Description: An RNA of 177 nucleotides, treated with DMS and 2A3 and read out base by base. The 2A3 profile rests on 1,935 reads. The DMS profile rests on 1,669 reads. For 2A3 the reverse transcriptase was SuperScript II with manganese. The RNA was probed in 150 mM KOAc, 10 mM MgCl2 and 150 mM bicine (pH 8.5) at 24 C.
RNA sequence: GGGAACGACUCGAGUAGAGUCGAAAAGCAGGCCGCCGCCGAACUCUCUGCCCAGGCCGGGCGCCACUUUGACCCGGCCCUCGUCGAGGUAGCACUGCGGAUUCUCAAUGACGUGCAUUAUUCGGUGGCCCUCUUGUAAUUUCGAUUACAAGAGGGCAAAAGAAACAACAACAACAAC
Reactivity to DMS in 0.01 (KOAc 150mM, MgCl2 10mM, bicine 150mM(pH8.5), 24C), signal-to-noise 2, nucleotides 027 to 126: g040c170a090g000g010c050c050g000c020c010g010c010c040g030a050a060c080u000c020u000c040u000g020c000c050c100a120g010g020c010c010g040g000g000c050g030c170c110a040c200u000u010u000g000a140c010c000c000g010g010c030c000c030u010c100g000u000c240g000a060g020g000u010a120g000c040a060c050u000g010c020g000g000a110u000u000c050u010c040a120a140u000g000a040c080g000u000g020c050a080u000u010a130u000u000c010g010g000u010g010
Reactivity to 2A3 in 0.01 (KOAc 150mM, MgCl2 10mM, bicine 150mM(pH8.5), 24C), signal-to-noise 2, nucleotides 027 to 126: g010c090a040g180g100c030c040g010c010c050g000c000c030g000a010a020c040u070c000u010c030u130g010c030c000c010a000g000g000c010c020g000g020g020c070g090c080c080a150c130u230u150u300g180a300c010c020c010g000g010c000c010c010u040c010g070u010c020g010a010g000g000u010a010g010c010a030c110u060g010c010g020g070a070u090u000c000u000c000a000a080u100g030a040c060g030u040g040c010a060u080u110a080u090u130c000g040g000u000g090